An RNA of 177 nucleotides, treated with DMS and 2A3 and read out base by base. It was measured as part of the RMDB library OK1LIB. The reactions ran in a buffer of 150 mM KOAc, 10 mM MgCl2 and 150 mM bicine (pH 8.5), at 24 C. For 2A3, 4,102 sequencing reads were counted. 2A3 adducts were read by reverse transcription with SuperScript II with manganese. For DMS, 11,918 sequencing reads were counted. Values cover nucleotides 27 to 126.
RNA sequence: GGGAACGACUCGAGUAGAGUCGAAAAGAGCCCGUUGCAUUCGAGCUUUUUCUUUUGCCGCCUGCUCGUUAUAUUUAUUGCUGGACCGUUUCUUUGGCGGCUUUUUCGGUCCUAUUCGGGCUCGAGAGGGACCGUUCGGCUUCGGCCGAGUGGUCCCAAAAGAAACAACAACAACAAC
Reactivity to DMS in 0.01 (KOAc 150mM, MgCl2 10mM, bicine 150mM(pH8.5), 24C), signal-to-noise 4, nucleotides 027 to 126: g000a020g020c000c010c000g010u010u030g000c030a070u010u010c030g000a020g020c010u020u050u030u050u060c150u050u030u040u040g000c000c010g000c020c010u020g010c000u000c020g010u040u030a090u050a080u050u040u040a070u020u000g010c040u010g000g000a010c020c000g010u020u050u040c190u020u030u030g000g030c020g000g000c000u000u000u000u010u020c020g010g020u000c000c000u000a090u010u010c030g010g000g000c000u000c000g000a090g010a210
Reactivity to 2A3 in 0.01 (KOAc 150mM, MgCl2 10mM, bicine 150mM(pH8.5), 24C), signal-to-noise 6, nucleotides 027 to 126: g010a000g000c000c000c010g010u020u090g010c040a050u070u110c030g000a020g000c020u170u170u050u090u100c090u070u260u150u120g000c010c000g010c010c030u050g000c020u010c000g030u130u020a110u010a040u100u280u010a090u050u050g010c020u020g000g000a000c000c000g050u050u190u190c130u120u140u090g020g010c030g000g000c020u020u010u000u010u030c000g010g000u000c000c000u010a030u020u080c010g000g000g010c000u010c000g000a000g030a010